[RMDB]
RNA sequence: GGGAACGACUCGAGUAGAGUCGAAAAUGGCUGAGAGUGUAGUUGUAUCAGUUUCAUGGUAAGUUAGACGAGCUUCCAUUAAAACUACAAAAGACUUCCAGAAGCAGGGUGGGAUAAUACGAAGAGAAGAGAGUGAUUCUUUCGAGAAUCACUCUCUAAAAGAAACAACAACAACAAC
Reactivity to 2A3 in 0.01 (KOAc 150mM, MgCl2 10mM, bicine 150mM(pH8.5), 24C), signal-to-noise 3, nucleotides 027 to 126: u060g020g000c000u000g020a000g000a040g170u040g010u010a010g040u000u020g020u050a020u120c010a010g000u000u060u150c030a030u000g030g010u170a010a040g020u060u140a070g020a170c090g030a030g010c020u000u000c000c000a030u060u080a020a030a010a010c010u040a020c040a000a120a000a010g080a020c000u090u010c080c020a030g010a050a020g030c030a010g040g010g000u110g010g000g050a020u050a140a040u040a070c060g100a110a090g030a020g010a300
Reactivity to DMS in 0.01 (KOAc 150mM, MgCl2 10mM, bicine 150mM(pH8.5), 24C), signal-to-noise 2, nucleotides 027 to 126: u030g000g000c000u000g000a070g010a150g000u030g000u000a000g010u020u000g000u010a090u020c100a030g000u000u000u010c140a010u000g010g000u020a040a080g000u000u010a100g020a230c210g000a080g000c020u010u010c000c020a010u020u020a040a040a010a020c020u000a050c010a080a070a060a110g010a110c040u000u040c020c060a050g040a050a050g030c070a110g020g010g000u010g000g010g000a080u020a030a070u020a060c090g010a040a150g000a130g020a060